This 177-nucleotide RNA was probed chemically with 2A3 and DMS. The DMS profile rests on 18,846 reads. For DMS the reverse transcriptase was MarathonRT. For 2A3, 3,355 sequencing reads were counted. It was measured as part of the RMDB library OK2TRN.
RNA sequence: GGGAACGACUCGAGUAGAGUCGAAAAGCGCUCGGCCAGCGCCGCGUGGGUGUUGCCCACGCCCUUCGGCUGGCCGGUGGAGCCGGAGGUGUAGAUGACGUAGGCGAGAUUGUCGCCGUGCAGGUGACAUACGAGGCCUAUUCGUAGGCCUCGUAUGAAAAGAAACAACAACAACAAC
Reactivity to 2A3 in 0.01 (KOAc 150mM, MgCl2 10mM, bicine 150mM(pH8.5), 24C), signal-to-noise 3, nucleotides 027 to 126: g040c050g010c040u060c080g020g010c010c000a020g000c010g040c020c020g000c000g000u010g000g030g010u170g110u270u300g070c000c000c000a010c000g000c000c000c000u100u100c020g070g000c000u010g000g000c030c000g000g020u050g040g000a030g000c030c040g040g030a060g030g030u120g020u120a090g020a160u100g040a030c080g040u090a060g030g010c060g010a030g010a110u150u220g090u070c010g000c020c010g000u040g040c060a020g040g030u030g020a020
Reactivity to DMS in 0.01 (KOAc 150mM, MgCl2 10mM, bicine 150mM(pH8.5), 24C), signal-to-noise 6, nucleotides 027 to 126: g000c060g010c040u000c030g010g000c010c010a080g010c010g020c180c150g000c020g040u000g000g010g030u000g010u000u010g020c020c000c000a030c000g020c010c060c040u010u010c120g010g010c000u000g010g010c010c010g000g000u000g010g000a120g020c030c020g000g000a060g010g010u000g010u000a070g010a110u010g000a070c080g010u000a120g010g010c030g000a080g010a180u000u000g000u000c020g010c000c010g010u000g020c120a070g010g010u000g000a140
Reactivities are given for positions 27 through 126.